[RMDB]
RNA sequence: GGGAACGACUCGAGUAGAGUCGAAAAGAUAUGGACAUGCGUUAGGUACUAGGAAGCGAUAAGUCCGGUUCGGAAACGAACCAGGACUUUUGACGCUUCCCUAGUACCUAACGCAUGUCCUAAGUCACAUAUUAGGUGCGUUCGCGCACCUAAUAUGAAAAGAAACAACAACAACAAC
Reactivity to DMS in 0.01 (KOAc 150mM, MgCl2 10mM, bicine 150mM(pH8.5), 24C), signal-to-noise 1, nucleotides 027 to 126: g010a050u000a300u010g010g010a000c000a010u000g000c000g000u000u000a020g000g010u000a000c000u000a030g020g020a060a040g020c010g030a150u010a020a010g020u010c000c000g000g020u000u010c000g020g000a120a100a250c020g020a070a010c000c010a100g050g020a010c000u000u000u000u000g000a210c100g000c000u000u000c240c030c020u000a010g010u000a000c020c000u020a000a000c000g020c000a000u000g010u000c010c000u000a010a080g010u000c040a300